Structure probing data (2A3 and DMS) for a 177-nucleotide construct. The RNA was probed in 150 mM KOAc, 10 mM MgCl2 and 150 mM bicine (pH 8.5) at 24 C. For DMS, 1,331 sequencing reads were counted. Source: RMDB library OK1LIB, as collected in RNAgym. For 2A3, 903 sequencing reads were counted. DMS adducts were read by reverse transcription with MarathonRT.
[RMDB]
RNA sequence: GGGAACGACUCGAGUAGAGUCGAAAAUUAUAACAGCUAUGAGGUACAAGUACCAGUUCUAUUUCCAAAAAUAAGAAAUGGAGAAGUAACUGACAGCUAUGACAACUACACCUUUCUCAACGCCAGGUAGGGAAAAAUCUUUCGAGAUUUUUCCCUAAAAAGAAACAACAACAACAAC
Reactivity to 2A3 in 0.01 (KOAc 150mM, MgCl2 10mM, bicine 150mM(pH8.5), 24C), signal-to-noise 2, nucleotides 027 to 126: u200u080a050u070a220a110c060a010g020c020u130a050u290g030a050g000g030u020a030c010a140a080g080u030a120c030c000a010g020u040u080c010u060a170u000u000u070c060c000a090a010a080a040a000u190a280a000g090a010a020a060u030g000g030a030g000a060a030g030u080a040a030c020u030g050a050c000a020g000c010u010a030u100g090a030c060a090a030c050u070a020c020a010c010c000u090u100u000c020u010c050a000a020c050g030c030c020a000g030g040
Reactivity to DMS in 0.01 (KOAc 150mM, MgCl2 10mM, bicine 150mM(pH8.5), 24C), signal-to-noise 1, nucleotides 027 to 126: u010u000a080u030a240a160c200a000g010c010u000a070u020g030a150g000g000u000a020c020a050a180g060u030a020c000c000a030g050u030u010c000u010a130u000u000u080c120c180a070a100a070a080a050u060a040a090g000a030a000a020u000g000g000a070g020a080a110g020u000a030a030c010u000g000a110c150a040g000c020u000a010u000g000a090c130a040a070c030u000a040c060a070c000c000u020u000u010c060u000c000a110a050c090g000c090c030a000g000g010